[RMDB]
RNA sequence: GGGAACGACUCGAGUAGAGUCGAAAAUGUGAAUGGAAUCAUGUAACAUGUGGCUGUGUGUGUCUGGCUGCUUUCACUGAGCAUGGUGUGGUCAAGUCUCAUCCAUGUGUUAGCGUGUGUUGGGGCUUCAUUCCCUUUCAUGGCUGAAUUUUGUGCAGCCUACCGUAGUGUUCGCACUACGGUAGGCAAAAGAAACAACAACAACAAC
Reactivity to 2A3 in 0.01 (KOAc 150mM, MgCl2 10mM, bicine 150mM(pH8.5), 24C), signal-to-noise 1, nucleotides 027 to 156: u170g020u070g080a030a000u120g020g080a010a020u080c060a030u060g050u160a030a040c040a050u060g010u010g050g000c010u000g000u000g050u000g000u000g060u130c010u020g020g000c030u020g010c010u030u080u090c030a010c020u020g030a000g030c030a050u060g000g030u040g030u060g070g000u030c040a030a030g020u060c000u030c010a120u040c030c040a050u050g000u030g150u080u140a020g060c030g000u020g000u010g020u030u080g000g020g010g000c000u030u020c020a070u020u050c050c000c000u090u090u000c060a070u000g060g000c040u030g070a150a180u040u090u070u100g080u070g030c080a050